[RMDB]
RNA sequence: GGGAACGACUCGAGUAGAGUCGAAAAUUGGCGAAUGCCUGUGGAUCUACAUUUGUUGCGGGUUCGAGACCCGUCAGAGGCCGGCUCUGUAGCUCAAUGGUAGAGCGGUGUAUUCACAUAAACUUGUAAAAGACACGUGCCUUCGGGCACGUGUCAACAUUUAUUAAGUCUUCGGACUUAAUAAAUGAAAAGAAACAACAACAACAAC
Reactivity to 2A3 in 0.01 (KOAc 150mM, MgCl2 10mM, bicine 150mM(pH8.5), 24C), signal-to-noise 3, nucleotides 027 to 156: u070u040g020g000c040g080a290a040u250g020c020c020u010g000u010g000g010a040u040c060u090a030c010a030u060u080u150g040u050u040g020c000g000g010g020u010u040c020g020a030g020a060c010c000c000g010u000c010a000g000a000g050g060c300c060g040g080c030u000c000u000g000u020a010g020c010u010c040a030a070u130g230g000u150a010g010a000g010c010g000g000u010g000u010a030u000u020c010a000c000a020u180a050a100a080c050u110u120g070u140a020a070a040a030g000a000c000a010c000g000u010g000c000c000u010u100c150g000g020g020c020a010c000g000u000g000u000c010a000a000
Reactivity to DMS in 0.01 (KOAc 150mM, MgCl2 10mM, bicine 150mM(pH8.5), 24C), signal-to-noise 2, nucleotides 027 to 156: u010u000g020g020c020g020a100a070u010g000c000c040u000g030u000g000g000a050u000c020u000a030c010a070u000u000u010g010u000u000g010c030g010g020g000u000u000c070g010a300g010a050c020c020c000g020u010c100a040g010a090g010g040c060c100g060g010c000u040c010u010g030u010a090g020c020u000c050a040a070u010g020g020u000a050g010a070g090c020g010g010u000g020u000a030u010u000c030a060c040a090u000a050a060a180c110u010u000g010u020a030a050a130a220g000a000c000a010c040g020u000g000c000c000u000u000c300g040g020g010c000a000c000g010u000g010u000c000a000a030